Description:
Source: RMDB library RNAMAK, as collected in RNAgym. The record gives the reactivity of an RNA of 207 nucleotides to DMS and 2A3. The reactions ran in a buffer of 150 mM KOAc, 10 mM MgCl2 and 150 mM bicine (pH 8.5), at 24 C. For 2A3 the reverse transcriptase was SuperScript II with manganese.

[RMDB]
RNA sequence: GGGAACGACUCGAGUAGAGUCGAAAACGUUGCCUUCGGGCAACGAAAAAACCUUUGUGUAAGCGUGUCAGGGAGCAAACUAGGACCCAUUGGGUCCGAAUUUGCGAGGAUCUGACAUACGCUUACACUCUGGUAAAAAUGCCAGUUCGCUGGCAAACCAAUAGCAACUGUUCGCAGUUGCUAUUGGAAAAGAAACAACAACAACAAC
Reactivity to DMS in 0.01 (KOAc 150mM, MgCl2 10mM, bicine 150mM(pH8.5), 24C), signal-to-noise 1, nucleotides 027 to 156: c010g040u000u000g020c030c000u000u000c300g050g000g010c010a000a000c000g010a000a020a100a090a070a030c000c000u000u000u010g000u000g000u000a000a010g040c000g020u020g000u010c010a040g000g000g000a190g030c010a000a000a010c000u000a300g010g020a020c010c020c010a300u000u000g050g010g000u000c010c010g000a010a000u020u000u000g000c010g010a070g030g000a030u010c000u000g000a010c000a020u000a020c050g030c000u000u000a000c010a020c000u010c000u000g000g000u000a020a060a040a090a120u020g040c020c010a050g000u000u010c300g020c010u000g010g000c010a040a060a140
Reactivity to 2A3 in 0.01 (KOAc 150mM, MgCl2 10mM, bicine 150mM(pH8.5), 24C), signal-to-noise 1, nucleotides 027 to 156: c010g000u000u000g000c000c020u050u100c260g070g010g000c000a000a000c000g000a050a000a000a000a000a000c010c000u010u000u010g010u000g000u000a000a000g000c020g000u010g000u000c000a000g010g010g000a020g010c000a000a010a000c020u040a030g010g010a010c010c020c110a300u200u300g010g000g000u010c000c000g010a010a020u000u010u000g000c010g010a110g000g000a020u000c000u000g000a000c010a000u090a000c010g000c000u000u000a000c000a000c000u000c000u000g010g000u080a090a030a010a030a020u080g000c010c000a000g000u050u080c200g050c090u000g000g000c000a020a030a030